[RMDB]
RNA sequence: GGGAACGACUCGAGUAGAGUCGAAAAAUGCCCAAUCCAUUGACGCCGGAAAGGGUCCGUGUGGAUGAUGAUGCCGCGAAUAUCCGAUAUGCCAGCAUAAUAUCGAAUCACGGCACAAUAGCGCUCGGUCCUUAAAUAUGUUCGCAUAUUUAAGGACAAAAGAAACAACAACAACAAC
Reactivity to 2A3 in 0.01 (KOAc 150mM, MgCl2 10mM, bicine 150mM(pH8.5), 24C), signal-to-noise 8, nucleotides 027 to 126: a000u140g040c000c000c010a000a020u030c020c010a020u030u110g060a040c100g120c120c010g150g110a190a110a110g180g010g010u000c020c030g060u070g010u030g040g040a050u040g010a020u070g040a070u030g060c010c000g020c010g030a080a030u090a060u150c060c010g010a000u000a000u030g090c070c050a060g040c040a130u080a250a010u020a140u020c010g000a020a000u010c010a010c010g010g000c010a000c000a010a090u100a030g090c060g020c040u050c100g070
Reactivity to DMS in 0.01 (KOAc 150mM, MgCl2 10mM, bicine 150mM(pH8.5), 24C), signal-to-noise 7, nucleotides 027 to 126: a100u010g010c000c000c000a140a170u000c020c020a040u000u010g010a070c070g020c090c080g000g010a060a080a180g000g000g000u000c020c270g010u010g020u000g000g010a090u000g010a090u000g010a150u000g000c010c000g010c020g000a090a100u000a130u010c070c010g010a020u000a020u000g000c100c100a100g000c150a070u010a070a020u000a000u000c000g010a080a040u000c010a030c010g000g000c010a020c050a100a090u000a080g010c070g000c080u000c100g020